An RNA of 207 nucleotides, treated with 2A3 and read out base by base. Source: RMDB library OK3TST, as collected in RNAgym. For 2A3, 3,169 sequencing reads were counted. The reactions ran in a buffer of 150 mM KOAc, 10 mM MgCl2 and 150 mM bicine (pH 8.5), at 24 C. For 2A3 the reverse transcriptase was SuperScript II with manganese.
RNA sequence: GGGAACGACUCGAGUAGAGUCGAAAACGAUCAGUACGAGUGCGUACUGAUCGAAGCUACUGGUGACAGUAGCAACUCGAAGAUAAUGAUAGCCGGAAUCAUUAACAAGUGUUAUAACGCGCCGAUAACACACUUCGAGAACCGGCAAGGCGCGAAAGCAUCUAGCAAUGUUCGCAUUGCUAGAUGCAAAAGAAACAACAACAACAAC
Reactivity to 2A3 in 0.01 (KOAc 150mM, MgCl2 10mM, bicine 150mM(pH8.5), 24C), signal-to-noise 4, nucleotides 027 to 156: c010g010a000u010c000a000g000u080a000c020g060a080g280u200g280c050g010u000a000c010u000g000a000u000c000g000a020a020g010c000u000a000c000u000g040g000u060g090a030c010a000g000u000a000g000c000a000a030c000u030c020g060a100a040g040a160u140a140a030u110g040a020u020a020g030c020c010g030g020a070a060u070c040a060u090u120a040a070c060a140a070g000u000g010u040u000a030u010a190a070c000g000c000g000c000c000g000a000u000a010a010c000a000c000a020c050u100u130c030g090a100g010a080a050c000c000g030g000c020a020a090g000g000c000g000c000g000a000a000a000